[RMDB]
RNA sequence: GGGAACGACUCGAGUAGAGUCGAAAACAUGGUGGCAAGUACGCCGCGAUAUUGCCCCACCUGCAAUAGAAGCGUAGACAUCAACUGUAGCGAGAGCUACUCAACUUAUGGACCUUAGAGCAUGCGAAGACGACUGGUCCUGUCGGAAUUCGCUAGAGGUACUAUAGGCGUUCGCGCCUAUAGUACCAAAAGAAACAACAACAACAAC
Reactivity to 2A3 in 0.01 (KOAc 150mM, MgCl2 10mM, bicine 150mM(pH8.5), 24C), signal-to-noise 3, nucleotides 027 to 156: c040a020u100g050g000u010g030g040c050a110a050g120u050a040c100g050c030c010g030c040g050a080u050a030u040u080g010c020c030c020c010a010c010c030u020g030c020a020a030u020a060g080a090a010g000c050g010u070a020g030a120c010a060u060c020a020a150c080u090g000u030a000g010c010g020a030g000a020g050c040u020a040c000u020c050a050a090c060u120u160a040u160g020g010a040c000c020u070u140a070g000a010g080c040a060u100g000c040g020a010a000g020a060c000g000a010c010u060g030g030u080c030c010u000g020u010c000g000g050a150a050u090u000c010g010c010u050a050g020a050
Reactivity to DMS in 0.01 (KOAc 150mM, MgCl2 10mM, bicine 150mM(pH8.5), 24C), signal-to-noise 1, nucleotides 027 to 156: c060a090u000g030g000u010g090g030c030a100a140g060u000a100c010g070c030c070g040c040g020a200u010a080u000u000g040c000c000c010c190a060c000c070u000g000c010a020a070u000a040g040a090a130g040c020g100u010a060g000a130c020a170u000c050a020a120c000u000g000u000a060g030c010g040a290g010a260g000c000u020a020c010u010c080a110a070c040u000u000a070u010g020g000a040c030c000u030u030a020g010a070g050c070a160u010g010c040g000a110a140g030a150c040g010a080c130u000g000g030u000c030c030u010g090u000c000g020g000a100a280u000u000c020g000c040u000a090g010a300